Structure probing data (DMS and 2A3) for a 177-nucleotide construct.
RNA sequence: GGGAACGACUCGAGUAGAGUCGAAAACGGGGAGGCCGCGCCACGCUGCCGCUUAAGCUGCAAGCCAAGAACGGUCAGCCUACCCGCUAUGCCGUGGCGCUGCGGGCACGCGACGAGUACGGGCGCGCCCUCGACACUAGUUCGCUAGUGUCGAGGGAAAAGAAACAACAACAACAAC
Reactivity to DMS in 0.01 (KOAc 150mM, MgCl2 10mM, bicine 150mM(pH8.5), 24C), signal-to-noise 2, nucleotides 027 to 126: c050g000g000g020g000a140g020g030c140c080g000c030g010c000c020a080c050g000c010u000g020c080c030g000c010u000u000a090a240g000c010u030g000c200a080a140g010c010c030a120a150g000a110a080c100g010g010u000c110a070g010c010c060u000a070c100c100c060g000c020u010a080u000g040c050c030g020u010g000g010c030g010c070u000g010c020g020g000g000c030a070c130g000c010g020a050c030g000a100g020u000a090c060g000g000g000c030g000c070g000
Reactivity to 2A3 in 0.01 (KOAc 150mM, MgCl2 10mM, bicine 150mM(pH8.5), 24C), signal-to-noise 2, nucleotides 027 to 126: c010g000g000g030g000a050g040g000c020c000g000c010g000c000c000a090c030g000c020u020g020c000c010g030c000u110u080a080a000g070c020u050g000c090a120a050g030c030c020a130a010g120a160a010c020g010g050u060c040a020g010c000c020u050a070c000c020c000g060c020u090a110u230g000c030c020g070u050g020g000c070g000c020u000g000c010g030g000g000c080a030c050g030c010g030a060c020g040a030g010u080a050c060g000g020g020c010g000c040g050
It was measured as part of the RMDB library OK2TST. For DMS the reverse transcriptase was MarathonRT. For 2A3, 2,301 sequencing reads were counted. Values cover nucleotides 27 to 126.